[RMDB]
This 177-nucleotide RNA was probed chemically with 2A3 and DMS. The data come from the RNA Mapping Database (RMDB), library OK2TRN. The reactions ran in a buffer of 150 mM KOAc, 10 mM MgCl2 and 150 mM bicine (pH 8.5), at 24 C.
RNA sequence: GGGAACGACUCGAGUAGAGUCGAAAAUUAACAUGGAUCUUGAGGGUGAGGCCUACUUUAGUUUAGAUUUUGUGUGAAGUAUUUGUAUCAGUGAGACAUGCCUGGCAACCCCAUUUUAAGGUAUUGCAUGCCUAAGGAAGUUCGCUUCCUUAGGCAUAAAAGAAACAACAACAACAAC
Reactivity to 2A3 in 0.01 (KOAc 150mM, MgCl2 10mM, bicine 150mM(pH8.5), 24C), signal-to-noise 1, nucleotides 027 to 126: u080u050a030a010c020a040u090g040g000a130u040c000u010u060g040a050g000g000g000u020g080a050g000g040c000c010u040a040c030u160u080u040a070g090u000u080u140a020g020a130u160u140u050u150g110u040g000u030g060a040a010g020u030a140u050u130u090g040u010a090u060c040a040g030u000g070a000g080a040c020a020u040g010c000c030u000g030g000c000a090a150c000c020c060c000a040u000u030u000u190a080a000g090g000u040a000u060u100g040c010
Reactivity to DMS in 0.01 (KOAc 150mM, MgCl2 10mM, bicine 150mM(pH8.5), 24C), signal-to-noise 4, nucleotides 027 to 126: u010u000a090a140c050a080u010g010g010a050u000c030u010u020g020a110g000g010g010u000g010a080g010g010c070c060u000a060c060u010u000u000a060g010u000u000u010a070g010a090u000u000u000u000g020u010g020u010g010a070a080g010u000a090u000u000u000g020u000a050u010c050a040g000u000g010a090g020a050c100a050u000g010c040c030u000g010g020c060a060a090c120c010c010c040a100u000u010u010u000a070a070g000g010u000a080u000u000g040c190
The DMS profile rests on 3,730 reads.